[RMDB]
RNA sequence: GGGAACGACUCGAGUAGAGUCGAAAAGAGUGAAGGACGACACGGCAACUGUCACGCUCUCAUUUCCUUUGCGCAUGUACCGACUACGCAUGUUACAUACACUACCUGUAGAGAGCCACCUUCAGACGGUUAUAUCGUUAUUCGUAACGAUAUAACCAAAAGAAACAACAACAACAAC
Reactivity to DMS in 0.01 (KOAc 150mM, MgCl2 10mM, bicine 150mM(pH8.5), 24C), signal-to-noise 7, nucleotides 027 to 126: g000a100g000u020g000a070a070g010g010a090c090g020a040c050a040c100g010g010c100a070a080c130u010g000u010c030a120c120g000c030u000c030u010c040a060u010u010u010c030c010u010u020u020g000c060g050c080a020u020g020u010a060c060c040g000a070c050u020a050c060g010c060a060u010g000u010u010a050c060a060u020a050c050a050c060u000a070c060c030u010g000u030a090g000a050g010a050g010c010c210a070c050c020u000u010c030a040g010a300c190
Reactivity to 2A3 in 0.01 (KOAc 150mM, MgCl2 10mM, bicine 150mM(pH8.5), 24C), signal-to-noise 9, nucleotides 027 to 126: g110a000g050u090g040a060a040g080g030a030c060g020a020c030a010c080g110g030c060a080a050c070u060g010u030c030a010c100g010c000u000c000u000c030a080u030u040u040c010c000u040u070u100g020c040g000c020a030u080g030u090a120c040c050g070a070c080u090a020c060g020c030a020u050g030u060u080a080c050a060u110a030c020a030c060u130a090c020c030u080g050u150a020g020a000g000a000g060c010c010a040c010c010u040u070c020a040g030a100c080